Chemical mapping of a 207-nucleotide RNA with 2A3 and DMS.
For DMS the reverse transcriptase was MarathonRT.

RNA sequence: GGGAACGACUCGAGUAGAGUCGAAAACAGAUCAGCCUCCUCGUCCUCCAACGGCGAACCGUCGCAGGUCAGACCUUGUUCUUGCUUGAGGUGCUCGAAAGCCGCAUUGCGGUCAUUCUCCUGUGCAGUCUCCGAACAGCUACGCCCAAAGACGAGAUCAUACCCGAAAAUUCGUUUUCGGGUAUGAAAAAGAAACAACAACAACAAC
Reactivity to 2A3 in 0.01 (KOAc 150mM, MgCl2 10mM, bicine 150mM(pH8.5), 24C), signal-to-noise 6, nucleotides 027 to 156: c040a010g070a140u160c050a020g040c000c030u030c020c010u030c010g010u040c000c020u060c050c030a130a060c040g010g000c020g040a050a050c040c030g100u100c020g000c020a010g020g020u050c060a020g040a070c010c020u040u080g040u120u060c040u070u120g040c020u050u080g030a020g040g010u020g050c040u050c080g090a120a060a020g010c020c010g030c180a260u050u300g020c010g020g010u010c010a050u090u030c030u000c010c010u030g000u030g010c020a030g070u030c030u040c030c020g030a060a030c010a060g020c010u060a040c050g040c000c000c000a010a090a030g050a020c020g010a000g010a020
Reactivity to DMS in 0.01 (KOAc 150mM, MgCl2 10mM, bicine 150mM(pH8.5), 24C), signal-to-noise 2, nucleotides 027 to 156: c060a130g020a080u000c040a160g020c030c010u000c020c020u000c030g000u000c030c010u010c050c080a100a110c030g010g040c040g010a050a100c040c030g010u000c020g020c070a080g010g000u000c060a110g030a100c010c060u000u000g000u000u000c070u000u020g010c010u010u010g000a060g010g030u010g020c030u000c060g020a070a080a180g010c050c020g000c010a140u020u000g010c040g030g000u000c040a140u000u000c040u010c010c000u000g000u000g000c030a070g030u010c020u000c020c030g020a090a070c050a090g030c040u000a070c040g000c000c020c030a060a070a080g010a080c050g010a100g030a300